[RMDB]
RNA sequence: GGGAACGACUCGAGUAGAGUCGAAAAGAUAUGGAUGUGGCAAGCCUAUAGGACGUUGAAAUCGGAAACGAUGGAGUCCGUAGGCAACCCACAUCCUAAGUCAAACCGGUUAGUUCGCUAACCGGAACACAGACACAAUGUUCGCAUUGUGUCUGUGAAAAGAAACAACAACAACAAC
Reactivity to DMS in 0.01 (KOAc 150mM, MgCl2 10mM, bicine 150mM(pH8.5), 24C), signal-to-noise 4, nucleotides 027 to 126: g020a040u000a300u000g000g020a000u010g010u000g000g020c030a040a300g000c010c000u000a010u010a140g060g000a010c000g000u000u010g000a050a160a020u010c010g000g000a120a130a160c010g000a020u000g000g000a150g010u000c010c000g020u000a020g000g000c000a020a080c300c000c000a000c000a000u000c000c000u000a000a100g000u000c010a050a140a190c000c010g010g020u000u010a000g030u000u020c240g020c000u000a000a010c000c000g000g000a050a040
Reactivity to 2A3 in 0.01 (KOAc 150mM, MgCl2 10mM, bicine 150mM(pH8.5), 24C), signal-to-noise 3, nucleotides 027 to 126: g000a010u050a020u150g000g000a000u000g000u010g000g020c060a060a060g010c000c010u030a030u050a300g000g000a000c030g120u300u070g030a030a050a010u000c010g010g040a050a040a040c010g000a010u010g010g000a000g000u000c000c000g000u000a000g000g000c000a000a000c000c000c010a000c000a000u010c000c010u000a000a000g040u000c030a050a050a160c000c000g000g010u010u000a020g020u020u060c300g000c230u000a000a010c000c020g000g000a000a000